[RMDB]
RNA sequence: GGGAACGACUCGAGUAGAGUCGAAAAGAAAGAAAGAAAGAAAGGUAUGAAGUCCUAUUCACCCCGGAUAGGAUAAACUUCAUAUUGAUCGUGUAUGUGCUAACGCACAUACACGAAUGCGCAUGCAGAACUGCAUGCAUGAACAUACGGGGUGCAAACUGGAUUAAUCAUUCGUGAUUAAUCCAGUAAAAGAAACAACAACAACAAC
Reactivity to 2A3 in 0.01 (KOAc 150mM, MgCl2 10mM, bicine 150mM(pH8.5), 24C), signal-to-noise 4, nucleotides 027 to 156: g040a010a070a010g070a060a060a010g070a060a110a020g060a080a080a030g050g000u020a000u000g000a000a000g000u000c000c000u000a010u010u010c040a020c000c000c000c000g000g000a000u000a000g020g010a020u070a030a020a000c000u000u000c000a010u010a010u040u110g040a040u030c000g000u000g000u000a000u000g000u000g010c080u170a160a060c170g000c000a000c000a000u000a000c000a000c000g000a000a000u050g000c020g000c000a000u010g000c010a000g050a300a070c200u040g000c000a010u000g000c000a010u150g050a050a040c060a040u230a070c000g010g000g000g010u010g010c040a100a110
Reactivity to DMS in 0.01 (KOAc 150mM, MgCl2 10mM, bicine 150mM(pH8.5), 24C), signal-to-noise 2, nucleotides 027 to 156: g010a180a090a110g010a150a070a110g010a220a080a130g000a100a110a260g020g030u010a030u000g010a020a040g020u010c010c020u000a040u000u020c000a090c010c010c000c010g000g010a020u000a010g010g000a070u000a070a160a060c030u000u000c000a080u010a040u000u000g010a140u000c020g010u000g000u000a020u010g050u000g030c000u000a130a210c300g000c020a030c020a000u010a010c000a000c000g020a010a020u000g020c090g000c000a040u020g020c010a020g020a040a100c120u030g050c090a080u000g000c010a040u010g000a110a070c110a070u010a100c020g020g010g010g030u000g020c110a050a040
The data come from the RNA Mapping Database (RMDB), library OK3TST.
This 207-nucleotide RNA was probed chemically with 2A3 and DMS.
2A3 adducts were read by reverse transcription with SuperScript II with manganese.
The DMS profile rests on 2,714 reads.
Values cover nucleotides 27 to 156.
High DMS reactivity at an A or C suggests that its Watson-Crick edge is free.
The RNA was probed in 150 mM KOAc, 10 mM MgCl2 and 150 mM bicine (pH 8.5) at 24 C.
Values are in units of 0.01, from 0 to 300, in steps of 10.